[RMDB]
RNA sequence: GGGAACGACUCGAGUAGAGUCGAAAACAUUCCUGUGUUAACUCUGAUAACACAGGGCUUUAUGGGAAGGAGAAAAAUGUGUUCAAUACUCUAUGAGAGAUAUUUUGGCUGGACACAGUGGCUCAUGCAUAUAAAUGCCAGUGCUUUGGGAGGCCGAAUUUAGGUCACUGUUCGCAGUGACCUAAAUAAAAGAAACAACAACAACAAC
Reactivity to DMS in 0.01 (KOAc 150mM, MgCl2 10mM, bicine 150mM(pH8.5), 24C), signal-to-noise 1, nucleotides 027 to 156: c060a200u000u000c000c000u010g000u000g040u000u010a000a060c040u000c180u000g010a260u010a080a000c060a060c010a020g020g020g020c130u010u020u010a110u010g020g040g000a100a040g000g010a050g010a050a050a010a060a180u000g020u000g000u010u030c040a050a180u000a080c010u000c020u000a120u010g010a240g020a100g040a170u010a020u000u000u000u000g040g030c030u000g040g000a060c050a020c000a060g020u010g000g000c030u000c040a090u010g020c060a070u020a130u000a040a030a090u000g020c030c040a110g020u000g000c060u000u000u000g000g000g000a140g000g030c040c040g000a080
Reactivity to 2A3 in 0.01 (KOAc 150mM, MgCl2 10mM, bicine 150mM(pH8.5), 24C), signal-to-noise 1, nucleotides 027 to 156: c040a060u130u080c020c010u020g000u000g010u020u030a120a100c040u080c180u300g110a190u050a020a010c010a000c010a010g000g010g000c030u150u160u130a140u140g020g000g040a010a050g010g010a030g020a010a080a050a060a070u050g020u000g000u020u000c040a050a030u030a160c020u000c010u090a140u240g070a040g000a020g030a150u030a100u110u120u080u140g080g000c010u010g020g010a010c010a010c020a050g040u050g040g010c020u050c060a030u090g020c040a010u180a000u060a250a290a020u100g000c000c000a010g020u020g040c000u060u080u090g070g010g000a040g010g030c010c010g010a010